Structure probing data (DMS and 2A3) for a 177-nucleotide construct. Values cover nucleotides 27 to 126.
RNA sequence: GGGAACGACUCGAGUAGAGUCGAAAACCGACUAUGGUGAUAAACGGACGGUGUAAUAAACCCAUUGGACCCGGGGGCGGUACCCGGCGCCUCCACCACAGCACAGCUUGCCGAUCAGGCUGUGUUGCUAACUAUGACUGUUCGCAGUCAUAGUUAGAAAAGAAACAACAACAACAAC
Reactivity to DMS in 0.01 (KOAc 150mM, MgCl2 10mM, bicine 150mM(pH8.5), 24C), signal-to-noise 3, nucleotides 027 to 126: c020c010g020a160c100u000a070u010g000g030u000g020a100u010a040a120a090c100g010g010a090c030g010g010u000g000u000a070a070u000a090a100a090c110c020c000a110u020u000g000g000a080c080c090c120g000g000g000g000g000c060g010g000u010a120c050c020c040g000g010c040g010c010c000u000c020c000a110c110c130a230c020a020g000c000a010c010a000g010c000u000u000g000c150c150g010a100u010c000a010g000g010c000u010g030u000g000u000u000g010
Reactivity to 2A3 in 0.01 (KOAc 150mM, MgCl2 10mM, bicine 150mM(pH8.5), 24C), signal-to-noise 3, nucleotides 027 to 126: c010c010g020a020c040u100a060u210g020g060u070g090a140u170a150a140a030c050g020g040a010c040g000g010u030g020u050a090a110u100a150a120a040c000c020c000a020u030u090g070g030a090c060c130c070g010g000g000g010g000c020g000g030u060a080c000c010c000g030g030c020g010c000c010u000c000c000a030c040c010a040c000a000g000c000a000c000a000g000c000u010u000g030c060c030g190a230u140c000a000g010g000c000u000g000u000g000u000u000g000
The RNA was probed in 150 mM KOAc, 10 mM MgCl2 and 150 mM bicine (pH 8.5) at 24 C. The 2A3 profile rests on 3,510 reads.